Structure probing data (DMS and 2A3) for a 177-nucleotide construct. The DMS profile rests on 3,001 reads. 2A3 adducts were read by reverse transcription with SuperScript II with manganese.
RNA sequence: GGGAACGACUCGAGUAGAGUCGAAAAGAGCCACUGUGUGCCUUUAGGACUAAAUUUGCAAAGCAUCCAGUGCUUCCAUUGUAAGGAGCGCCCACAAUCUCUUUGUCCUGAAUGAAUGACGUGUCUCCUCUUGAAUGCAGUUCGCUGCAUUCAAGAGAAAAGAAACAACAACAACAAC
Reactivity to DMS in 0.01 (KOAc 150mM, MgCl2 10mM, bicine 150mM(pH8.5), 24C), signal-to-noise 3, nucleotides 027 to 126: g010a040g030c090c050a050c010u000g020u010g000u010g010c040c040u000u010u010a060g010g020a060c050u010a020a060a120u010u000u010g000c140a080a130a110g010c040a020u000c120c030a070g010u000g020c030u010u000c060c010a110u020u000g010u020a110a110g000g000a050g000c060g020c020c030c040a050c110a040a090u000c050u010c020u000u000u010g000u000c000c010u000g010a060a090u010g030a080a090u010g010a120c160g040u000g000u000c010u000c050
Reactivity to 2A3 in 0.01 (KOAc 150mM, MgCl2 10mM, bicine 150mM(pH8.5), 24C), signal-to-noise 3, nucleotides 027 to 126: g030a020g050c030c000a030c040u080g030u030g030u030g080c010c010u030u040u110a050g050g000a010c020u120a060a080a230u120u110u110g030c040a030a040a100g000c010a020u030c010c030a060g040u020g030c030u050u000c010c000a110u040u210g100u090a080a040g030g030a010g000c050g000c010c020c000a060c020a030a120u040c000u000c000u070u030u070g010u030c010c010u030g080a060a040u110g040a060a070u110g030a040c050g030u030g040u000c010u000c000